This 177-nucleotide RNA was probed chemically with DMS. The DMS profile rests on 764 reads. The reactions ran in a buffer of 150 mM KOAc, 10 mM MgCl2 and 150 mM bicine (pH 8.5), at 24 C. For DMS the reverse transcriptase was MarathonRT.
RNA sequence: GGGAACGACUCGAGUAGAGUCGAAAAGCCGUAUGGGCCCAGAGCUUCUCCGCCAAUGGGUGCGGCGGGUGCUCGGCCACGAAGACCUCACGGCGACGCAGAAGACCGUCCUGGUGGCCCUGCAGACCGCUUCCGUAUGUUUCGACAUACGGAAGCGAAAAGAAACAACAACAACAAC
Reactivity to DMS in 0.01 (KOAc 150mM, MgCl2 10mM, bicine 150mM(pH8.5), 24C), signal-to-noise 1, nucleotides 027 to 126: g000c000c010g010u000a110u000g000g010g010c020c050c220a090g010a050g020c030u000u000c070u020c020c040g010c000c000a170a170u000g020g000g060u000g040c190g010g010c070g030g030g010u000g010c000u000c070g010g000c050c010a020c080g010a090a090g020a110c070c010u000c160a020c020g000g000c010g000a160c130g000c070a020g000a070a060g000a050c030c050g000u000c040c060u000g050g030u010g000g020c070c040c040u030g000c030a130g000a090c170